Source: RMDB library OK2TST, as collected in RNAgym.
Chemical mapping of a 177-nucleotide RNA with DMS and 2A3.
As a SHAPE reagent, 2A3 marks flexible, mostly unpaired nucleotides at the ribose 2'-OH.
2A3 adducts were read by reverse transcription with SuperScript II with manganese.
For DMS the reverse transcriptase was MarathonRT.
For DMS, 2,322 sequencing reads were counted.
The reactions ran in a buffer of 150 mM KOAc, 10 mM MgCl2 and 150 mM bicine (pH 8.5), at 24 C.
RNA sequence: GGGAACGACUCGAGUAGAGUCGAAAAACCAGAGCGGGCACGCCUAUGUCUAAGGGUUACCUUAGCACCGACUUCCUAACUGGUUCACUGCCAGAAUAUUCUGAACUAGAUAGAGCUACGAUGAGGCCGUAUCCUGGUGAUUCGUCACCAGGAUACGAAAAGAAACAACAACAACAAC
Reactivity to DMS in 0.01 (KOAc 150mM, MgCl2 10mM, bicine 150mM(pH8.5), 24C), signal-to-noise 3, nucleotides 027 to 126: a110c050c020a110g020a080g010c090g000g000g030c120a070c090g000c060c060u000a080u010g010u020c010u010a030a040g000g000g010u010u020a100c010c000u000u000a010g000c050a100c090c020g010a080c090u000u000c020c020u010a160a170c030u010g000g000u000u000c090a060c150u020g030c080c070a090g000a140a050u010a110u000u000c030u000g000a030a040c030u010a030g000a090u000a070g000a090g010c010u000a020c100g020a090u010g010a090g000g000c060
Reactivity to 2A3 in 0.01 (KOAc 150mM, MgCl2 10mM, bicine 150mM(pH8.5), 24C), signal-to-noise 3, nucleotides 027 to 126: a000c020c010a030g010a050g040c060g000g020g000c030a010c040g020c010c020u090a090u120g080u010c000u010a000a050g060g070g020u180u230a220c000c000u000u010a010g000c000a010c020c020g080a080c020u050u070c020c020u050a090a120c020u040g000g000u020u070c070a040c060u120g040c050c010a030g090a120a080u210a110u180u090c040u030g050a080a040c040u010a070g030a120u060a050g040a070g060c030u070a020c090g070a070u080g060a040g000g050c010